[RMDB]
RNA sequence: GGGAACGACUCGAGUAGAGUCGAAAAGAAAGAAAGAAAGAAUGUCUUUGUGCUAAGGUGCAUCUAGUGCAGAUAGUGAAAUAGACUAGCACCUACUGCCCUAAGUGCUCCUUCUGGCAUAAGGGAAGUUUACUUAGGUCUUCGGACCUAAGUAAACAAAAGAAACAACAACAACAAC
Reactivity to 2A3 in 0.01 (KOAc 150mM, MgCl2 10mM, bicine 150mM(pH8.5), 24C), signal-to-noise 8, nucleotides 027 to 126: g100a010a070a010g110a040a060a010g110a040a110a010g110a050a080u140g070u050c000u000u020u020g010u010g000c010u040a030a010g010g000u000g000c000a000u000c010u020a000g010u010g010c010a020g080a240u060a020g080u090g090a100a060a080u150a070g150a100c100u080a050g040c020a030c000c020u000a030c000u000g000c040c000c000u010a070a000g010u000g000c000u020c000c000u060u040c090u100g010g000c000a000u010a000a000g020g010g020a070a050
Reactivity to DMS in 0.01 (KOAc 150mM, MgCl2 10mM, bicine 150mM(pH8.5), 24C), signal-to-noise 4, nucleotides 027 to 126: g000a090a090a110g000a070a060a050g010a110a050a070g000a090a060u040g010u010c000u000u000u010g020u000g010c010u000a040a040g000g000u000g000c000a000u000c090u000a010g000u000g000c040a000g010a170u010a010g000u010g000a060a090a110u020a110g000a100c300u020a080g000c090a090c080c050u010a080c030u000g000c000c060c000u000a000a040g010u010g000c000u010c010c010u000u010c210u020g020g000c020a000u000a010a020g010g000g000a040a090

Chemical mapping of a 177-nucleotide RNA with 2A3 and DMS. It was measured as part of the RMDB libraries RFM100 and RFMREP. 2A3 adducts were read by reverse transcription with SuperScript II with manganese. DMS adducts were read by reverse transcription with MarathonRT.